An RNA of 177 nucleotides, treated with DMS and 2A3 and read out base by base.
The 2A3 profile rests on 1,164 reads.
It was measured as part of the RMDB library OK2TRN.
RNA sequence: GGGAACGACUCGAGUAGAGUCGAAAAAAUCUUUGAAUUAACUUUAUGGCUAAUUUUAUUAAACCUUAUAAUGAUGAUCCAUUUGUAGGUCAUUUAGCAACACCAAUAACAUCAUCUGCUGUCACACCGUAAGUAUUGGGUUCGCCCAAUACUUACGAAAAGAAACAACAACAACAAC
Reactivity to DMS in 0.01 (KOAc 150mM, MgCl2 10mM, bicine 150mM(pH8.5), 24C), signal-to-noise 2, nucleotides 027 to 126: a050a030u000c010u010u000u000g000a040a040u000u000a020a050c010u000u000u000a100u030g000g010c010u020a010a020u000u010u000u010a070u040u010a150a070a050c030c000u000u000a080u010a060a050u000g000a040u010g000a080u000c070c020a090u010u000u000g020u020a070g000g010u010c040a040u000u000u000a020g000c040a050a090c080a050c040c040a060a060u010a020a080c080a040u000c050a040u000c030u000g000c050u000g000u000c040a050c120a090c150
Reactivity to 2A3 in 0.01 (KOAc 150mM, MgCl2 10mM, bicine 150mM(pH8.5), 24C), signal-to-noise 2, nucleotides 027 to 126: a000a040u060c040u100u060u060g050a060a050u100u030a040a070c010u150u170u190a070u290g010g000c000u020a040a100u090u090u120u230a140u070u230a070a130a070c000c000u080u130a070u040a100a040u090g040a030u030g000a020u070c030c000a060u010u020u200g070u090a020g010g000u040c050a040u010u030u090a020g000c000a020a060c010a010c090c000a020a070u110a070a040c010a030u070c030a010u030c050u020g020c030u040g080u110c030a010c010a020c110
DMS (dimethyl sulfate) methylates the pairing face of unpaired adenines and cytosines.